[RMDB]
RNA sequence: GGGAACGACUCGAGUAGAGUCGAAAACGUUGGCUGGGGCGUUGAAGAACUGGUCCUGCUUGCGCCACGGGAUGCCGCCGCCGUCCUCGGGCACCCAGGCUUCGACGAACUGGUUGGUGAGCUUGGGCAGUCUCCUUAUGUUCGCAUAAGGAGACUGAAAAGAAACAACAACAACAAC
Reactivity to DMS in 0.01 (KOAc 150mM, MgCl2 10mM, bicine 150mM(pH8.5), 24C), signal-to-noise 2, nucleotides 027 to 126: c060g020u000u000g010g020c030u000g010g010g010g030c030g010u010u000g010a090a050g010a080a090c040u010g010g000u000c060c070u000g030c060u010u000g000c070g030c040c070a100c110g000g020g000a020u020g010c020c020g010c040c020g000c040c010g010u000c020c020u010c050g000g020g000c060a170c050c020c000a010g000g000c000u010u010c060g000a000c090g020a070a070c150u040g010g040u000u020g000g030u000g000a040g000c010u000u020g000g010g000
Reactivity to 2A3 in 0.01 (KOAc 150mM, MgCl2 10mM, bicine 150mM(pH8.5), 24C), signal-to-noise 3, nucleotides 027 to 126: c040g040u060u090g050g000c050u060g000g010g060g000c050g030u080u130g040a070a050g050a170a140c050u050g030g030u110c000c020u050g030c020u040u120g030c040g030c040c020a040c040g020g000g040a040u080g030c000c040g010c030c030g020c030c020g010u060c000c010u090c020g000g000g030c020a030c000c010c000a020g000g020c000u020u030c020g040a040c020g020a150a210c010u060g080g010u050u020g020g050u110g020a050g000c000u040u010g030g010g010
The record gives the reactivity of an RNA of 177 nucleotides to DMS and 2A3. For DMS the reverse transcriptase was MarathonRT. The DMS profile rests on 5,249 reads.